[RMDB]
RNA sequence: GGGAACGACUCGAGUAGAGUCGAAAAGAUAUGGAUCCCGGUCAGAGCUCUGGGUCGGAAACGACCCUGAGCGACGAAGACCAGGGAUCCUAAGUCAAAACUUGAUCUUAGUUCGCUAAGAUCAAGACCAUCUGUAGACGUUCGCGUCUACAGAUGGAAAAGAAACAACAACAACAAC
Reactivity to DMS in 0.01 (KOAc 150mM, MgCl2 10mM, bicine 150mM(pH8.5), 24C), signal-to-noise 1, nucleotides 027 to 126: g000a040u000a060u000g000g000a000u000c010c000c000g000g000u000c000a130g020a130g040c000u000c000u010g020g020g000u000c000g010g040a010a000a010c000g000a020c000c000c000u000g000a030g010c000g000a050c240g000a220a260g000a000c000c000a140g030g000g000a000u020c000c010u000a000a030g010u000c010a170a120a120a200c010u000u010g010a020u000c000u000u000a010g010u010u030c230g000c000u000a000a000g000a000u000c000a010a010g000a250
Chemical mapping of a 177-nucleotide RNA with DMS. For DMS, 1,222 sequencing reads were counted.